The record gives the reactivity of an RNA of 177 nucleotides to 2A3.
[RMDB]
RNA sequence: GGGAACGACUCGAGUAGAGUCGAAAAAUGCUUGGGAUUGUGAACUGAAACUGUUCACAUGAACCUGCAUUGAUUACGUCCCUGCCCCUGUACACACCGCCCGUCGCUACUACGGAUUGAAUUAUUUCCGUAGCCUAACGUUCGCGUUAGGCUACGGAAAAGAAACAACAACAACAAC
Reactivity to 2A3 in 0.01 (KOAc 150mM, MgCl2 10mM, bicine 150mM(pH8.5), 24C), signal-to-noise 1, nucleotides 027 to 126: a000u000g000c000u080u090g000g000g010a000u060u040g000u000g080a020a000c000u000g040a250a150a110c150u270g000u000u000c030a000c010a000u000g060a000a120c000c000u000g000c000a000u000u000g100a040u110u170a050c180g030u100c000c000c000u000g080c010c000c010c010u080g100u000a080c030a000c010a010c000c000g010c010c000c010g050u020c000g050c020u030a010c000u050a040c040g180g000a140u020u070g010a000a100u100u010a050u030u100u110
Source information
For 2A3, 407 sequencing reads were counted. Conditions: 150 mM KOAc, 10 mM MgCl2 and 150 mM bicine (pH 8.5), 24 C.